[RMDB]
RNA sequence: GGGAACGACUCGAGUAGAGUCGAAAAAAUGUAUCAUUUGUGACUAAAGCAAACAGUAGUCAGCUGCUAUGGCAUAUAACACAAGAUGCGUCAGUGGGACAUGACCCACAGAGAAGCAGCCUUAGAAGUGUUAUCAACUCUUUAAACUCAUUAGUGCUAAAGCGAUAUAUUUCGAUAUAUCGCUUUAAAAAGAAACAACAACAACAAC
Reactivity to DMS in 0.01 (KOAc 150mM, MgCl2 10mM, bicine 150mM(pH8.5), 24C), signal-to-noise 5, nucleotides 027 to 156: a070a040u000g020u000a090u010c060a120u000u010u000g030u000g020a110c030u000a070a090a170g030c060a090a080a090c080a090g010u000a060g020u000c060a120g010c020u000g010c000u000a120u000g020g010c030a130u000a050u010a050a060c050a060c040a060a080g010a110u000g000c010g000u010c020a170g020u000g000g010g010a160c150a130u000g010a160c000c000c000a010c010a130g000a120g010a050a050g010c010a020g010c050c030u000u000a090g010a070a080g010u000g010u010u000a040u000c080a080a050c050u000c020u000u010u000a070a080a090c050u000c050a110u000u000a070g020u010g010c090
Reactivity to 2A3 in 0.01 (KOAc 150mM, MgCl2 10mM, bicine 150mM(pH8.5), 24C), signal-to-noise 4, nucleotides 027 to 156: a000a000u180g020u070a120u130c060a070u070u090u080g030u030g040a050c040u080a100a040a030g050c030a130a040a030c020a050g060u080a010g040u030c030a030g030c020u050g000c020u060a030u140g050g000c010a020u060a010u030a140a030c040a000c020a050a080g030a050u010g010c000g050u050c010a030g000u010g010g010g010a060c070a170u160g120a130c040c000c000a000c000a000g090a000g010a040a000g000c010a010g030c020c010u040u040a030g030a130a020g050u010g000u070u060a060u070c050a040a090c040u040c020u070u140u120a080a060a020c010u020c090a080u040u160a050g000u000g040c020